[RMDB]
RNA sequence: GGGAACGACUCGAGUAGAGUCGAAAACAUAUGAUCAUGGCCGGCCGAUCCUGAUCGAUCAGGUACGCGCGGCCGUACUGUACACGAUGCGCGCGCGUAUGUGGAUCGGUACGUACGGCCACGGCCGUACACUAUCGGUGUUCGCACCGAUAGUGUAAAAAGAAACAACAACAACAAC
Reactivity to DMS in 0.01 (KOAc 150mM, MgCl2 10mM, bicine 150mM(pH8.5), 24C), signal-to-noise 8, nucleotides 027 to 126: c090a140u010a090u010g010a100u000c120a100u010g010g030c010c000g000g010c010c010g000a160u000c100c040u010g000a020u000c060g010a050u000c020a080g010g010u000a040c070g020c010g010c010g000g020c020c010g010u000a020c090u010g020u000a230c170a050c030g010a100u010g010c010g020c000g020c030g010c020g010u000a020u000g020u010g020g000a010u000c010g020g010u000a010c090g010u000a110c020g010g000c010c030a070c060g030g020c000c010g020
Reactivity to 2A3 in 0.01 (KOAc 150mM, MgCl2 10mM, bicine 150mM(pH8.5), 24C), signal-to-noise 9, nucleotides 027 to 126: c020a030u220a130u300g140a100u170c060a120u210g010g000c010c010g020g000c000c010g040a090u060c010c030u070g040a040u080c030g020a070u030c020a020g090g070u020a010c010g000c010g000c010g020g000c010c000g000u010a010c010u120g120u140a040c080a020c140g070a110u180g040c200g020c000g000c000g000c020g120u060a030u090g190u140g080g030a010u000c000g000g000u010a020c010g020u020a020c010g000g000c000c020a010c020g010g000c000c000g000